The record gives the reactivity of an RNA of 177 nucleotides to DMS and 2A3. The 2A3 profile rests on 79,063 reads.
RNA sequence: GGGAACGACUCGAGUAGAGUCGAAAAAGGCUAGGAGCAAGUUGUCGGCGUACGGCUCGCACCGGGUAGGCGAGCAGCGUUGCCUGCUCAGCUUGUCUUGUGGCUUUAGCAGACAGCAGCUUCUGAGGCGGGAAGCGACGUUCGCGUUGUUUCCCGCAAAAGAAACAACAACAACAAC
Reactivity to DMS in 0.01 (KOAc 150mM, MgCl2 10mM, bicine 150mM(pH8.5), 24C), signal-to-noise 7, nucleotides 027 to 126: a060g010g000c050u010a040g010g000a020g000c010a080a080g020u010u000g010u010c020g000g010c010g010u020a110c160g000g000c010u020c060g020c030a060c300c120g000g010g020u030a040g010g010c000g000a010g010c000a020g000c030g010u030u040g010c110c000u010g010c040u000c030a080g010c000u000u000g000u020c010u000u000g010u000g000g000c000u000u000u000a110g020c030a060g000a030c040a030g000c040a170g000c020u000u000c010u000g000a180g010
Reactivity to 2A3 in 0.01 (KOAc 150mM, MgCl2 10mM, bicine 150mM(pH8.5), 24C), signal-to-noise 9, nucleotides 027 to 126: a000g130g020c060u060a020g020g020a010g010c050a170a080g040u000u010g080u070c010g010g020c030g040u070a030c050g030g010c040u080c150g080c020a040c040c060g020g010g040u060a030g010g020c000g000a000g000c000a000g000c090g180u160u200g010c010c000u010g000c000u000c010a020g000c000u010u010g010u040c000u030u050g060u020g010g000c000u050u040u060a030g000c010a010g010a040c010a010g020c010a010g000c000u020u000c010u020g060a090g170